[RMDB]
RNA sequence: GGGAACGACUCGAGUAGAGUCGAAAAUGGUUCAAGCCAGAUGGAUCUAGAAGGCCCGAAAUUAUCAUCUAUCAUGAUAAGGCAAUCCUUCCAGCAAUCAGGGGUCUUGUGCGGCAGAUGAUGGAGAGCCCAGUUACUUAUUCGUAAGUAACUGGGCAAAAGAAACAACAACAACAAC
Reactivity to 2A3 in 0.01 (KOAc 150mM, MgCl2 10mM, bicine 150mM(pH8.5), 24C), signal-to-noise 4, nucleotides 027 to 126: u120g040g030u060u080c060a110a010g040c020c000a010g010a040u090g030g010a010u050c020u040a040g030a120a040g100g030c020c020c020g040a110a110a080u100u070a030u030c010a000u000c070u170a090u120c060a040u070g090a010u030a020a030g050g000c040a040a070u060c010c000u030u020c020c030a030g020c040a080a130u130c020a040g000g000g000g040u020c000u030u020g020u030g020c020g020g000c030a010g020a070u050g020a010u060g010g050a090g010a000
Reactivity to DMS in 0.01 (KOAc 150mM, MgCl2 10mM, bicine 150mM(pH8.5), 24C), signal-to-noise 4, nucleotides 027 to 126: u010g020g000u000u010c050a070a170g010c040c040a060g010a090u020g020g000a000u000c030u000a120g040a050a070g000g000c060c010c020g010a100a100a110u010u010a000u000c000a010u010c230u020a070u030c180a050u000g010a030u010a010a040g000g010c090a120a070u040c030c000u010u020c020c090a120g030c110a040a050u020c090a090g010g000g000g000u010c010u000u000g010u000g020c090g010g000c050a080g010a070u020g010a060u000g000g000a100g010a210
Source information: The record gives the reactivity of an RNA of 177 nucleotides to 2A3 and DMS. Values cover nucleotides 27 to 126. For DMS, 6,462 sequencing reads were counted. For 2A3, 4,701 sequencing reads were counted. DMS adducts were read by reverse transcription with MarathonRT. It was measured as part of the RMDB library OK1LIB. The reactions ran in a buffer of 150 mM KOAc, 10 mM MgCl2 and 150 mM bicine (pH 8.5), at 24 C. In probing experiments dimethyl sulfate is read out at A N1 and C N3, which are open when not base-paired.